[RMDB]
RNA sequence: GGGAACGACUCGAGUAGAGUCGAAAAUGCGAUAAACGGCACCUAUAAGGUGGUGCCGAACCAGCGUGACCUACCAACACGCAUCGAGCAGUCUGGUAUGACUGCAAACCUAUGGUAAACAAAAGAAACGAUGAUUCAGGUUCGCCUGAAUCAUCGUAAAAGAAACAACAACAACAAC
Reactivity to 2A3 in 0.01 (KOAc 150mM, MgCl2 10mM, bicine 150mM(pH8.5), 24C), signal-to-noise 2, nucleotides 027 to 126: u050g000c000g040a000u070a080a110a070c020g010g000c000a000c010c000u100a080u020a270a180g280g020u090g000g000u000g000c030c000g000a000a000c000c000a010g010c020g000u030g000a070c000c030u000a020c040c000a030a000c000a000c040g010c000a070u060c000g030a030g000c000a000g010u030c000u200g110g160u300a160u240g010a010c000u000g000c000a010a000a010c060c010u110a090u110g000g020u060a070a140a000c070a020a050a000a060g140a050a180
Reactivity to DMS in 0.01 (KOAc 150mM, MgCl2 10mM, bicine 150mM(pH8.5), 24C), signal-to-noise 1, nucleotides 027 to 126: u000g010c080g000a040u000a010a110a070c000g000g000c000a000c000c000u000a100u040a100a070g010g000u000g010g000u000g010c000c000g000a010a010c080c080a220g000c050g000u010g020a040c070c020u000a030c000c020a150a190c020a000c010g000c000a070u000c000g000a150g000c000a000g030u000c000u000g000g040u000a110u000g000a030c000u000g010c000a040a050a150c100c070u000a000u000g010g010u010a040a100a080c300a000a020a030a170g000a170a150
Chemical mapping of a 177-nucleotide RNA with 2A3 and DMS. For 2A3, 1,460 sequencing reads were counted. The reactions ran in a buffer of 150 mM KOAc, 10 mM MgCl2 and 150 mM bicine (pH 8.5), at 24 C. For DMS, 669 sequencing reads were counted.